[RMDB]
RNA sequence: GGGAACGACUCGAGUAGAGUCGAAAAUUCGACAGUAUGAACCCCGCCCAAUUUGACAGGUUUAGUGAUGAAGAACUGAAACUGAUUGGUGUCCUGGCAGCUUCGGCACUGAAUAAUGCGCUAUUAGCGCAAGUUGAUUCUUCGGAAUCAACUUGCGAAAAGAAACAACAACAACAAC
Reactivity to DMS in 0.01 (KOAc 150mM, MgCl2 10mM, bicine 150mM(pH8.5), 24C), signal-to-noise 3, nucleotides 027 to 126: u010u000c050g010a090c070a080g010u010a060u000g000a090a140c030c010c030c070g010c030c030c020a050a070u000u010u010g010a170c070a070g010g000u000u000u010a020g010u010g000a130u010g010a080a090g010a070a060c050u000g010a070a040a060c030u000g000a190u000u010g010g030u000g000u000c040c010u000g000g020c040a070g010c040u000u000c080g010g020c040a040c040u000g010a050a050u000a040a080u000g000c040g010c040u000a100u010u010a090g010
Reactivity to 2A3 in 0.01 (KOAc 150mM, MgCl2 10mM, bicine 150mM(pH8.5), 24C), signal-to-noise 2, nucleotides 027 to 126: u070u030c020g020a010c020a030g150u120a100u160g090a090a080c020c010c020c020g030c030c000c010a030a030u040u010u130g080a080c010a020g000g070u020u060u050a040g010u050g130a120u060g070a040a140g030a100a020c020u030g000a030a040a030c020u040g040a090u080u110g040g000u060g030u000c050c010u020g020g030c020a020g000c040u000u080c020g030g000c030a040c020u010g030a040a030u150a100a020u090g030c070g000c050u040a080u140u170a140g070
The record gives the reactivity of an RNA of 177 nucleotides to DMS and 2A3. Conditions: 150 mM KOAc, 10 mM MgCl2 and 150 mM bicine (pH 8.5), 24 C. For 2A3, 1,984 sequencing reads were counted.